[RMDB]
RNA sequence: GGGAACGACUCGAGUAGAGUCGAAAAACGCUUCACAAUGUGCGGCAAAGAAACAUUAUUUAUGCAAAGGCACUUCGCAAUGUGUGCUCAAACAUUGCUUAUUCAAACACGCUUCACAAUGUGCGACAAAACUUCACGGUCUUCGGACCGUGAAGAAGGGCAUAAUGUGGUUCGCCACAUUAUGCCCAAAAGAAACAACAACAACAAC
Reactivity to 2A3 in 0.01 (KOAc 150mM, MgCl2 10mM, bicine 150mM(pH8.5), 24C), signal-to-noise 3, nucleotides 027 to 156: a000c040g040c060u140u130c020a020c000a040a190u060g000u010g020c090g030g000c040a080a060a030g070a110a100a050c060a090u090u150a140u080u230u090a130u160g050c090a120a070a030g100g000c030a000c030u030u020c020g030c050a020a040u070g000u010g030u010g030c100u110c240a050a070a000c010a020u010u000g040c000u050u050a130u120u110c070a030a070a030c080a010c080g000c000u050u070c010a020c020a130a120u070g050u030g050c030g100a040c070a040a060a050a020c000u000u010c000a000c000g010g000u000c000u010u030c030g130g010a000c010c000g000u000g000a000a000g000a000a000